Record summary
Conditions: 150 mM KOAc, 10 mM MgCl2 and 150 mM bicine (pH 8.5), 24 C. An RNA of 177 nucleotides, treated with DMS and 2A3 and read out base by base. For DMS, 642 sequencing reads were counted. 2A3 adducts were read by reverse transcription with SuperScript II with manganese. It was measured as part of the RMDB library OK2TST.
[RMDB]
RNA sequence: GGGAACGACUCGAGUAGAGUCGAAAAUUUGGACACUUUCUUCAGCUGCAAAAUUGUUGCUAUAUUGAACAACAGAAUGCUACUGCUCAAGCCAAUGACCAGUCCAACCGAAGAGUCUGAAGCAUUACGCACUACUCUGUUUCGACAGAGUAGUGCGAAAAGAAACAACAACAACAAC
Reactivity to DMS in 0.01 (KOAc 150mM, MgCl2 10mM, bicine 150mM(pH8.5), 24C), signal-to-noise 1, nucleotides 027 to 126: u010u000u020g010g010a090c020a130c120u000u000u000c020u000u010c040a010g000c020u000g000c060a060a040a140a110u000u010g010u000u000g000c040u000a210u000a170u000u000g020a030a100c000a050a030c020a060g000a080a090u000g050c100u000a070c140u000g000c070u010c030a020a090g000c120c090a080a210u000g000a100c060c040a060g020u000c060c050a050a000c200c020g020a000a060g010a060g000u000c020u000g060a030a020g000c110a090u000u000a030
Reactivity to 2A3 in 0.01 (KOAc 150mM, MgCl2 10mM, bicine 150mM(pH8.5), 24C), signal-to-noise 1, nucleotides 027 to 126: u060u010u080g020g000a000c010a010c140u060u150u100c010u030u050c040a040g000c020u060g000c020a020a000a010a290u130u050g000u060u020g020c010u010a010u020a140u300u220g050a160a020c020a000a000c010a030g080a050a010u060g010c010u020a060c050u010g040c000u000c050a040a020g000c010c000a020a090u060g040a060c020c000a020g000u000c000c000a010a000c030c020g050a040a010g010a020g030u010c050u040g010a020a000g030c040a030u060u170a050